RNA sequence: GGGAACGACUCGAGUAGAGUCGAAAAGAUAUGGAGCCAAAUGACGCUUCUGUAUUCGGAAACGAAUACAAUAGAACUACGUCUAUGGCUCCUAAGUCAAAUCCAAUCAAGUUCGCUUGAUUGGAAAGUAUGAUUAGGACUUCGGUCCUAAUCAUACAAAAGAAACAACAACAACAAC
Reactivity to DMS in 0.01 (KOAc 150mM, MgCl2 10mM, bicine 150mM(pH8.5), 24C), signal-to-noise 3, nucleotides 027 to 126: g020a030u000a300u010g000g000a010g010c000c000a010a180a130u000g000a010c010g010c200u000u000c020u000g010u000a000u010u000c000g010g010a080a090a140c000g000a000a000u000a000c000a100a100u020a090g010a040a040c180u010a130c030g010u000c000u000a300u000g000g010c000u000c000c000u000a010a070g020u010c040a070a110a070u000c000c000a010a010u000c000a000a010g000u000u010c260g020c000u000u010g000a020u000u000g000g000a000a010a060
Reactivity to 2A3 in 0.01 (KOAc 150mM, MgCl2 10mM, bicine 150mM(pH8.5), 24C), signal-to-noise 4, nucleotides 027 to 126: g020a000u030a010u080g000g000a000g010c000c010a100a210a090u190g000a000c030g050c300u030u000c020u050g010u000a000u010u000c000g020g020a000a050a020c000g000a010a000u010a000c020a030a100u250a080g030a100a070c170u300a070c300g000u020c000u000a040u000g010g000c000u000c000c000u000a000a000g010u000c000a020a030a030u010c000c000a000a010u000c000a000a000g060u080u110c160g110c210u000u000g000a010u010u000g000g000a010a010a000